[RMDB]
RNA sequence: GGGAACGACUCGAGUAGAGUCGAAAAGAUAUGGAUGCCGACUCCGAUAAGUCCCAUUCGGAAACGAAUGUGGACUUUUGACGGAGAAGGCAUCCUAAGUCAAAGCUUUCUGCUUCGGCAGAAAGCACUAAAUCGAAUACUUCGGUAUUCGAUUUAGAAAAGAAACAACAACAACAAC
Reactivity to 2A3 in 0.01 (KOAc 150mM, MgCl2 10mM, bicine 150mM(pH8.5), 24C), signal-to-noise 3, nucleotides 027 to 126: g020a010u070a020u140g000g000a000u000g000c000c010g020a030c000u000c000c030g080a120u050a220a000g010u000c000c000c000a000u010u000c010g030g030a090a020a040c030g000a000a010u130g090u300g050g000a010c020u010u020u010u030g040a030c010g000g000a000g000a000a000g000g000c000a000u010c000c000u000a010a000g000u010c040a120a030a100g000c000u000u020u020c000u010g030c020u050u110c300g190g000c000a000g000a000a000a000g000c000a000
Reactivity to DMS in 0.01 (KOAc 150mM, MgCl2 10mM, bicine 150mM(pH8.5), 24C), signal-to-noise 7, nucleotides 027 to 126: g010a030u000a300u010g000g000a010u010g010c000c000g010a300c000u000c000c000g010a190u000a010a020g000u000c000c000c000a020u000u000c000g010g000a120a100a140c000g010a010a000u010g000u010g040g000a000c000u000u000u000u000g010a230c110g010g000a010g010a060a300g000g010c000a010u000c000c000u000a000a080g010u000c030a110a150a110g000c000u000u000u000c000u000g000c000u000u010c300g030g020c000a000g010a010a000a000g020c000a050